An RNA of 207 nucleotides, treated with 2A3 and read out base by base. The reactions ran in a buffer of 150 mM KOAc, 10 mM MgCl2 and 150 mM bicine (pH 8.5), at 24 C. The data come from the RNA Mapping Database (RMDB), library OK3TST. The 2A3 profile rests on 400 reads. 2A3 is a SHAPE reagent: it acylates the 2'-hydroxyl of flexible nucleotides of all four kinds.
RNA sequence: GGGAACGACUCGAGUAGAGUCGAAAAAUCUCAAUUUUUACAGAUUGAGAAUCAAAAGUAUUAAUCACGUACAUUGAUUGAGCACCUAGUAUGUGCCUGUAUCUCAGCAUAUGAUAUAUAUGAGGAAACAAUGAGAGGCCUACGCUUGUUAAGGUAACGGCACUAAUAUCUUCGGAUAUUAGUGCCGAAAAGAAACAACAACAACAAC
Reactivity to 2A3 in 0.01 (KOAc 150mM, MgCl2 10mM, bicine 150mM(pH8.5), 24C), signal-to-noise 1, nucleotides 027 to 156: a000u050c040u030c040a060a000u080u020u080u160u110a070c050a010g030a030u000u000g010a000g030a000a000u040c050a010a030a010a000g040u030a030u020u130a020a150u090c040a000c230g030u040a030c010a180u000u050g030a010u090u110g060a070g060c020a040c150c010u040a070g020u050a030u070g090u080g020c030c010u080g070u150a130u010c000u000c000a020g030c000a030u030a040u070g160a000u140a060u080a000u000a000u300g050a050g070g060a070a070a070c000a150a050u100g020a000g030a030g100g060c020c080u030a080c030g030c090u030u010g060u130u140a130a030g010g010u170a060a040